[RMDB]
Structure probing data (2A3) for a 207-nucleotide construct.
It was measured as part of the RMDB library OK3TST.
RNA sequence: GGGAACGACUCGAGUAGAGUCGAAAAUUGGUGACUAAAAAGACCAACGUACCGCAGCGAACGGCCAUGCUCUUUGACGCGUUCAAGAGGAAAUUCAAAAAGUACUAUUCGGACGAAAGAAAAAUGUUCUACAGCAUCGACAUGGCGUGGAAGACGGCUGCUAAGCUUCGUUCGCGAAGCUUAGCAGAAAAGAAACAACAACAACAAC
Reactivity to 2A3 in 0.01 (KOAc 150mM, MgCl2 10mM, bicine 150mM(pH8.5), 24C), signal-to-noise 1, nucleotides 027 to 156: u020u000g000g000u020g030a110c140u200a000a060a000a000a080g160a010c000c010a000a000c000g020u020a030c000c000g000c060a000g000c010g060a030a020c000g020g020c010c000a050u060g000c010u020c010u030u100u150g030a040c000g020c000g090u030u010c010a010a000g000a050g080g040a060a060a040u240u040c210a040a130a220a030a000g030u040a000c000u010a060u020u090c050g000g000a000c000g060a130a130a060g020a000a090a000a030a000u150g110u050u020c000u080a090c000a020g010c050a000u040c010g010a060c000a030u040g000g010c000g020u060g030g000a030a030g110a060c060g050g030